[RMDB]
RNA sequence: GGGAACGACUCGAGUAGAGUCGAAAAGCGUACUACUCCCAUUGUCAGAAGCGAAGUGGAGCGAUAAGUCACUUCCCAAAUAGGAAGUGACUUUUGACGCUCCAUGGAGGUUUCUUGGAUUUAUGGGAGUAUCGCAAAAGAUACCUUCGGGUAUCAAGUAUGGACGUUAGUUCGCUAACGUCCAUACAAAAGAAACAACAACAACAAC
Reactivity to 2A3 in 0.01 (KOAc 150mM, MgCl2 10mM, bicine 150mM(pH8.5), 24C), signal-to-noise 2, nucleotides 027 to 156: g000c010g030u090a070c050u000a010c010u040c040c030c010a010u020u030g000u010c010a000g010a010a010g020c030g040a030a020g030u000g010g000a010g000c000g060a070u010a020a000g000u000c000a000c010u030u070c000c030c090a210a270a060u300a060g000g000a000a000g000u000g030a020c000u010u010u000u060g000a000c010g000c010u000c000c000a000u010g000g000a040g000g300u040u020u010c020u070u100g180g020a030u250u300u160a010u050g000g000g000a000g010u000a000u000c000g010c000a100a060a000a010g000a000u020a030c000c000u010u060c300g090g000g030u000a000u010c030a020a040
Reactivity to DMS in 0.01 (KOAc 150mM, MgCl2 10mM, bicine 150mM(pH8.5), 24C), signal-to-noise 1, nucleotides 027 to 156: g010c010g080u000a070c050u000a000c020u000c000c000c000a110u000u020g030u000c030a080g010a020a090g000c000g000a300a300g010u000g010g020a040g030c030g000a210u010a060a030g000u010c010a010c000u000u000c000c000c050a050a150a220u020a030g000g010a070a000g020u010g000a010c000u000u000u000u020g020a300c070g050c010u000c000c000a040u000g000g000a300g000g010u000u000u000c000u010u010g000g000a130u010u010u000a030u030g000g000g000a050g000u000a010u010c000g000c000a070a060a070a170g020a020u000a020c020c020u000u000c290g100g000g010u000a060u000c050a040a120